[RMDB]
RNA sequence: GGGAACGACUCGAGUAGAGUCGAAAAGCUCUAUCCUUCGGGAUAGAGCAAACGCUACCAUUGACGGUGAAGCCGGACCUGAGGUUCAGCAUAGUCGGGCUAAAAGUCACAUGUUCGCAUGUGACAAUCUUCAAGUGAAGUUCGCUUCACUUGAAGAAAAAGAAACAACAACAACAAC
Reactivity to DMS in 0.01 (KOAc 150mM, MgCl2 10mM, bicine 150mM(pH8.5), 24C), signal-to-noise 3, nucleotides 027 to 126: g000c000u000c000u000a010u000c000c000u000u020c210g010g010g010a020u000a000g000a000g010c000a010a020a060c160g010c060u000a100c010c020a150u010u010g010a100c050g000g000u000g010a100a170g010c010c030g010g000a050c040c030u000g010a110g030g010u000u000c060a050g010c080a060u000a190g020u010c030g000g010g010c040u000a020a060a110a130g000u000c000a010c000a020u000g000u000u010c170g040c010a020u000g020u000g000a000c010a060a040
Reactivity to 2A3 in 0.01 (KOAc 150mM, MgCl2 10mM, bicine 150mM(pH8.5), 24C), signal-to-noise 2, nucleotides 027 to 126: g000c000u020c010u000a000u000c000c000u030u090c210g070g000g000a000u000a000g000a000g000c000a000a000a000c040g020c040u080a060c010c030a120u030u150g090a040c040g000g030u040g080a070a000g000c010c000g040g000a010c020c020u130g150a150g170g000u050u080c030a000g000c000a020u030a050g020u030c050g030g040g020c020u060a100a060a030a070g000u010c000a000c000a000u020g030u040u060c200g000c090a000u000g000u000g000a010c000a000a030

The record gives the reactivity of an RNA of 177 nucleotides to DMS and 2A3. High DMS reactivity at an A or C suggests that its Watson-Crick edge is free. Reactivities are rounded to 0.1 and cut off at 0 and 3. The reactions ran in a buffer of 150 mM KOAc, 10 mM MgCl2 and 150 mM bicine (pH 8.5), at 24 C. 2A3 adducts were read by reverse transcription with SuperScript II with manganese. The DMS profile rests on 3,455 reads.